[RMDB]
RNA sequence: GGGAACGACUCGAGUAGAGUCGAAAAAGUGCGAAAGAAACCAGGAAAGACAGAAACUGGGAAAGAAAGUACGAGAAGAACUACGUUGUUUCGAGAUUCUGUCUUUUUCACUCGAUUCAGCGUAGAAGGGAAAUCUUAUGUUCGCAUAAGAUUUCCCAAAAGAAACAACAACAACAAC
Reactivity to DMS in 0.01 (KOAc 150mM, MgCl2 10mM, bicine 150mM(pH8.5), 24C), signal-to-noise 2, nucleotides 027 to 126: a150g000u010g000c020g050a060a050a160g010a300a150a140c000c060a020g000g000a150a130a040g000a000c010a010g000a050a010a130c010u000g020g000g010a060a070a060g000a100a060a130g000u000a040c030g000a150g010a110a140g010a250a200c010u000a000c000g000u000u000g010u010u000u000c000g000a010g000a300u000u040c000u020g000u000c000u000u010u030u020u020c160a010c000u010c000g000a000u000u000c000a000g000c010g000u000a010g000a070a100
Reactivity to 2A3 in 0.01 (KOAc 150mM, MgCl2 10mM, bicine 150mM(pH8.5), 24C), signal-to-noise 3, nucleotides 027 to 126: a000g050u020g000c030g070a120a100a080g180a070a130a000c000c000a010g040g000a090a060a000g010a030c030a030g000a000a090a000c000u020g000g010g050a040a120a090g090a000a080a000g040u050a020c050g030a010g100a260a070g060a090a050c020u010a000c010g020u010u010g010u000u000u000c000g020a010g000a040u070u060c000u000g040u010c010u040u070u000u090u150c030a010c020u000c000g000a000u000u000c000a000g020c000g000u020a010g010a060a020